[RMDB]
RNA sequence: GGGAACGACUCGAGUAGAGUCGAAAAUCAAAUCACUGUGACUUCCAGGUCGCGUCAACUGGACAGUGGUCAAGGCAUAACGAUCUGGAUUGUCGAUCUGCGUGGCCUUCACCACCAACGUUGCCCCAGGAUUAAUUUAGUUCGCUAAAUUAAUCCUAAAAGAAACAACAACAACAAC
Reactivity to DMS in 0.01 (KOAc 150mM, MgCl2 10mM, bicine 150mM(pH8.5), 24C), signal-to-noise 9, nucleotides 027 to 126: u060c110a080a090a080u030c110a070c110u010g020u030g000a030c030u010u020c040c060a070g010g010u010c030g000c090g000u010c190a060a060c040u010g010g010a070c250a160g020u020g000g010u000c130a040a020g010g000c040a050u010a140a300c110g000a020u010c010u030g010g010a080u040u020g000u020c080g000a040u010c030u000g010c260g000u000g000g010c030c020u000u010c150a040c000c000a040c030c050a060a100c100g010u000u000g010c010c000c010c090
Reactivity to 2A3 in 0.01 (KOAc 150mM, MgCl2 10mM, bicine 150mM(pH8.5), 24C), signal-to-noise 9, nucleotides 027 to 126: u110c040a030a040a060u160c060a040c110u150g050u080g080a020c020u110u030c060c030a050g020g050u030c010g010c020g070u040c020a080a090c050u080g070g060a070c030a110g120u120g060g020u040c040a040a040g010g000c040a050u070a160a040c030g010a030u030c040u130g070g050a160u130u180g120u100c040g020a020u010c020u060g020c040g050u050g030g070c000c030u030u020c020a020c010c000a000c010c010a040a030c040g030u020u040g090c010c000c000c010
The record gives the reactivity of an RNA of 177 nucleotides to DMS and 2A3. 2A3 adducts were read by reverse transcription with SuperScript II with manganese. Values cover nucleotides 27 to 126. Conditions: 150 mM KOAc, 10 mM MgCl2 and 150 mM bicine (pH 8.5), 24 C. High DMS reactivity at an A or C suggests that its Watson-Crick edge is free. Source: RMDB library OK1LIB, as collected in RNAgym. For DMS, 24,017 sequencing reads were counted.